The data come from the RNA Mapping Database (RMDB), libraries RFM100 and RFMREP. This 177-nucleotide RNA was probed chemically with 2A3 and DMS. High DMS reactivity at an A or C suggests that its Watson-Crick edge is free. Reactivities are rounded to 0.1 and cut off at 0 and 3.
RNA sequence: GGGAACGACUCGAGUAGAGUCGAAAAGGGUGGAUACGAAAUGGCUUCUAAAACAAAGAAGGCUAUUAUCGACGUAAAGAAACAAUUUGAGGCUGUUCAUAAACAAUUUGAAUUGGUUCAAAUUUUGUUUCGUUUGAUAGUUCGCUAUCAAACGAAAAAAAGAAACAACAACAACAAC
Reactivity to 2A3 in 0.01 (KOAc 150mM, MgCl2 10mM, bicine 150mM(pH8.5), 24C), signal-to-noise 5, nucleotides 027 to 126: g070g020g020u110g010g050a050u050a080c010g020a010a000a030u010g000g000c000u000u010c010u090a190a180a090a040c100a050a130a010g030a020a020g120g010c030u010a020u020u010a170u040c020g080a060c050g030u090a060a080a060g080a030a080a000c020a020a030u000u000u020g000a000g030g020c010u010g000u000u000c000a010u080a060a160a060c080a100a090u070u020u020g020a010a010u040u020g210g040u240u020c000a010a020a030u050u050u020u050g060
Reactivity to DMS in 0.01 (KOAc 150mM, MgCl2 10mM, bicine 150mM(pH8.5), 24C), signal-to-noise 4, nucleotides 027 to 126: g000g000g020u000g000g000a120u000a070c040g010a040a030a030u010g000g000c020u000u000c010u010a060a080a120a160c300a120a110a030g000a020a040g000g010c010u000a010u000u000a090u000c040g020a120c130g010u000a040a060a080g000a050a040a050c050a010a020u010u000u000g010a010g000g000c020u000g000u000u000c030a020u020a070a150a110c270a080a100u020u000u000g000a010a010u000u010g000g000u010u000c000a010a020a020u010u000u000u010g010